Notes:
The record gives the reactivity of an RNA of 177 nucleotides to DMS and 2A3. Reactivities are given for positions 27 through 126. The reactions ran in a buffer of 150 mM KOAc, 10 mM MgCl2 and 150 mM bicine (pH 8.5), at 24 C. DMS adducts were read by reverse transcription with MarathonRT.
[RMDB]
RNA sequence: GGGAACGACUCGAGUAGAGUCGAAAAUCUGCAAUCUUCGGAUUGCAGAAAAUACGGAUCGAUACGGAUCCAUACGGAUCCAUACGGAUCCAUACGGAUCCAAAACGUACCUCUUCGGAGGUACGAACGUAUUCCAUAAGUUCGCUUAUGGAAUACGAAAAGAAACAACAACAACAAC
Reactivity to DMS in 0.01 (KOAc 150mM, MgCl2 10mM, bicine 150mM(pH8.5), 24C), signal-to-noise 7, nucleotides 027 to 126: u000c000u000g000c000a000a000u000c000u000u020c230g040g010a020u000u000g000c000a010g000a000a030a060a070u000a120c150g000g000a070u010c090g000a120u010a070c200g010g000a010u000c000c000a040u000a010c100g010g000a010u000c000c000a120u010a060c220g010g010a010u000c000c000a030u000a000c080g010g000a020u000c000c010a060a030a090a180c020g000u000a000c000c000u000c000u000u010c150g030g000a010g010g000u000a000c010g000a040a080
Reactivity to 2A3 in 0.01 (KOAc 150mM, MgCl2 10mM, bicine 150mM(pH8.5), 24C), signal-to-noise 5, nucleotides 027 to 126: u010c010u000g000c000a000a010u000c000u020u040c100g130g000a000u000u000g010c000a000g000a000a010a000a000u120a010c070g050g030a110u160c080g030a020u090a230c100g000g000a000u000c000c000a000u030a010c040g000g000a000u000c010c000a020u100a100c120g000g000a000u010c000c000a000u030a000c030g000g000a000u000c010c000a010a030a000a020c010g000u000a000c000c000u000c000u030u040c230g120g000a000g000g000u000a000c000g000a000a000